[RMDB]
RNA sequence: GGGAACGACUCGAGUAGAGUCGAAAAGAUAUGGACUUUGUUUCGAUAAGCUAGGGUCGGAAACGACCUAAUAGCUUUUGACGAAACAUUGUCCUAAGUCAAACACUACAUCUUCGGAUGUAGUGAAGUUAGAGGUUUAGUUCGCUAAACCUCUAACAAAAGAAACAACAACAACAAC
Reactivity to 2A3 in 0.01 (KOAc 150mM, MgCl2 10mM, bicine 150mM(pH8.5), 24C), signal-to-noise 4, nucleotides 027 to 126: g010a000u020a020u060g000g000a000c000u000u000u010g070u040u020u000c070g080a210u110a300a010g000c010u030a020g000g020g010u000c000g010g000a010a020a010c000g000a010c000c000u000a070a070u030a010g010c000u030u030u060u190g160a040c000g000a000a000a000c000a000u010u000g000u000c000c000u000a020a000g010u010c020a040a070a060c010a000c010u010a000c000a000u000c010u030u090c300g210g000a000u000g000u000a010g000u000g000a030a000
Reactivity to DMS in 0.01 (KOAc 150mM, MgCl2 10mM, bicine 150mM(pH8.5), 24C), signal-to-noise 6, nucleotides 027 to 126: g000a020u000a160u010g000g000a010c000u000u000u010g010u000u000u000c000g020a200u010a020a030g020c000u000a070g010g010g010u000c000g010g000a030a040a090c000g010a010c000c000u000a030a070u000a020g010c000u000u000u010u010g020a220c060g000a010a010a010c000a010u000u000g000u000c000c000u000a000a050g010u000c010a150a140a280c010a010c000u000a000c000a010u000c000u000u010c280g020g000a020u000g000u000a000g010u000g000a020a050

Chemical mapping of a 177-nucleotide RNA with 2A3 and DMS.
The reactions ran in a buffer of 150 mM KOAc, 10 mM MgCl2 and 150 mM bicine (pH 8.5), at 24 C.
Reactivities are given for positions 27 through 126.
The DMS profile rests on 10,568 reads.
The 2A3 profile rests on 17,540 reads.